[RMDB]
Conditions: 150 mM KOAc, 10 mM MgCl2 and 150 mM bicine (pH 8.5), 24 C. Structure probing data (2A3 and DMS) for a 177-nucleotide construct. Reactivities are given for positions 27 through 126.
RNA sequence: GGGAACGACUCGAGUAGAGUCGAAAAUAAACACCUCGAAUGAGGUGGAGAGUCGUGCAAAUAAGAGGCUCGACAGAUGCACGACAAAGCGAGCCUACAACAAACAAAUAAAAUUAAAACACAAAAACGUGAUCGUGCAGUUCGCUGCAUGAUCACGAAAAGAAACAACAACAACAAC
Reactivity to 2A3 in 0.01 (KOAc 150mM, MgCl2 10mM, bicine 150mM(pH8.5), 24C), signal-to-noise 5, nucleotides 027 to 126: u110a020a060a000c000a000c010c000u000c030g200a250a280u300g000a010g000g000u030g000g000a070g000a000g020u000c010g000u000g000c000a070a040a080u190a270a060g050a050g060g020c010u010c000g050a050c010a020g110a040u040g000c000a000c000g010a050c080a080a050a000g060c010g000a000g000c000c000u090a050c000a060a020c030a160a090a000c120a070a060a060u300a080a150a010a030u180u130a090a090a100a010c120a000c040a020a090a030a020a020
Reactivity to DMS in 0.01 (KOAc 150mM, MgCl2 10mM, bicine 150mM(pH8.5), 24C), signal-to-noise 2, nucleotides 027 to 126: u020a020a000a190c000a020c000c000u000c000g000a180a200u040g000a000g050g010u000g010g020a100g000a210g000u000c020g000u000g010c000a050a080a060u010a140a160g000a030g000g000c000u000c010g000a080c120a100g000a160u000g000c070a000c000g030a000c010a020a150a050g000c060g000a000g030c020c000u010a070c130a160a040c150a060a130a050c240a110a020a080u000a110a060a050a070u080u010a020a000a020a030c200a000c160a060a000a010a010a030

DMS adducts were read by reverse transcription with MarathonRT.